[RMDB]
RNA sequence: GGGAACGACUCGAGUAGAGUCGAAAAGAUAUGGAUCAGAGGGACAUGCUCGUCGGAAACGACCGUGAGCAACAGCCCUACCUGAUCCUAAGUCAAACAGUACCGAAUGUUCGCAUUCGGUACUGAAGUUAUCUCUCCCCUUCGGGGGAGAGAUAACAAAAGAAACAACAACAACAAC
Reactivity to 2A3 in 0.01 (KOAc 150mM, MgCl2 10mM, bicine 150mM(pH8.5), 24C), signal-to-noise 1, nucleotides 027 to 126: g000a010u100a000u090g000g000a000u000c030a000g010a040g070g030g040a080c090a070u070g010c000u000c030g150u050c010g100g040a110a110a090c130g130a060c150c200g110u050g000a000g040c010a000a080c060a160g070c010c030c000u070a150c020c000u040g000a000u000c000c000u000a040a040g030u000c050a030a100a090c010a020g010u000a000c000c000g000a000a000u020g040u060u140c300g000c200a000u000u010c000g000g000u010a000c000u000g000a020a000
Reactivity to DMS in 0.01 (KOAc 150mM, MgCl2 10mM, bicine 150mM(pH8.5), 24C), signal-to-noise 2, nucleotides 027 to 126: g000a150u000a300u010g000g000a000u000c030a070g010a070g000g000g000a040c040a240u000g000c000u020c010g000u000c010g010g010a170a160a230c170g020a050c030c300g000u000g010a000g020c000a020a130c190a180g010c010c000c010u000a100c190c010u000g010a010u000c000c010u010a000a080g000u000c060a230a140a180c000a010g030u000a000c010c000g000a020a000u000g020u000u000c160g010c000a000u000u000c000g000g000u000a000c000u000g000a010a060
Record summary:
Source: RMDB library TTRDEL, as collected in RNAgym. This 177-nucleotide RNA was probed chemically with 2A3 and DMS. The DMS profile rests on 753 reads. In probing experiments dimethyl sulfate is read out at A N1 and C N3, which are open when not base-paired.